Source information: Conditions: 150 mM KOAc, 10 mM MgCl2 and 150 mM bicine (pH 8.5), 24 C. The record gives the reactivity of an RNA of 207 nucleotides to 2A3.
RNA sequence: GGGAACGACUCGAGUAGAGUCGAAAAAGCCUAUCAAGAAAGAUUAAAAUCUCGAACACAGUGGUUCUGCCAAGCAACUCUUGUUUUACCAAGAUUAAUUCCUUCUCAUGCUGCUGCUUUAUAUCAUAUAAUAAAAUUCCACAAAUCAUCCUUAACAAACUUGUGUGAGAUUCGUCUCACACAAGUUAAAAGAAACAACAACAACAAC
Reactivity to 2A3 in 0.01 (KOAc 150mM, MgCl2 10mM, bicine 150mM(pH8.5), 24C), signal-to-noise 2, nucleotides 027 to 156: a010g030c020c030u050a100u050c030a050a030g070a100a090a000g010a020u190u300a080a010a020a070u070c060u020c040g040a030a000c060a000c010a140g030u020g030g000u080u030c000u020g020c000c030a060a020g000c020a000a090c040u000c010u030u040g050u040u300u090u150a030c060c020a010a010g010a030u000u110a100a030u040u110c010c000u040u030c020u020c030a030u040g000c020u010g000c010u000g030c030u140u110u050a140u070a000u190c000a000u150a050u080a300a020u120a000a080a020a020u170u000c030c030a090c080a180a110a020u160c010a030u160c020c140u210u190a090a060c010a090